Structure probing data (DMS and 2A3) for a 170-nucleotide construct. The RNA was probed in 150 mM KOAc, 10 mM MgCl2 and 150 mM bicine (pH 8.5) at 24 C. For DMS the reverse transcriptase was MarathonRT. The 2A3 profile rests on 4,259 reads. It was measured as part of the RMDB library 15KLIB.
RNA sequence: GGGAACGACUCGAGUAGAGUCGAAAACUCUGAUAGUGGUUGCAUUCUUCCAUCUGAGUGCACUAUGUUUAGGGAUGCAGAGGGCCGUAUGACACCAUACUGCCAUGAUCCUACUGUUUUGCCUGGGUACGGUGGUGGUUCGCCACCACCAAAAGAAACAACAACAACAAC
Reactivity to DMS in 0.01 (KOAc 150mM, MgCl2 10mM, bicine 150mM(pH8.5), 24C), signal-to-noise 3, nucleotides 027 to 129: c030u040c030u000g000a080u060a020g020u010g040g030u040u040g000c040a080u020u000c010u050u030c250c140a170u060c110u070g030a020g000u000g000c000a040c000u010a020u000g040u040u010u080a060g050g020g000a120u020g020c080a110g050a160g000g000g000c050c090g070u010a000u040g000a190c150a140c300c030a060u050a050c050u030g000c010c020a080u050g010a100u040c020c000u040a090c110u030g040u000u010u000u000g040c090c050u040g060g010g040u020a000c230
Reactivity to 2A3 in 0.01 (KOAc 150mM, MgCl2 10mM, bicine 150mM(pH8.5), 24C), signal-to-noise 4, nucleotides 027 to 129: c040u010c010u040g050a070u100a100g050u000g040g010u140u070g020c000a010u020u000c000u150u080c090c010a130u040c100u100g030a020g000u020g000c000a010c010u000a060u050g050u020u150u090a050g080g040g000a030u150g100c030a000g030a180g090g030g000c000c000g010u000a000u000g080a080c020a020c120c020a010u000a010c010u010g000c000c000a020u040g030a000u000c040c010u000a190c050u040g080u050u080u130u060g050c000c000u010g040g020g030u030a060c040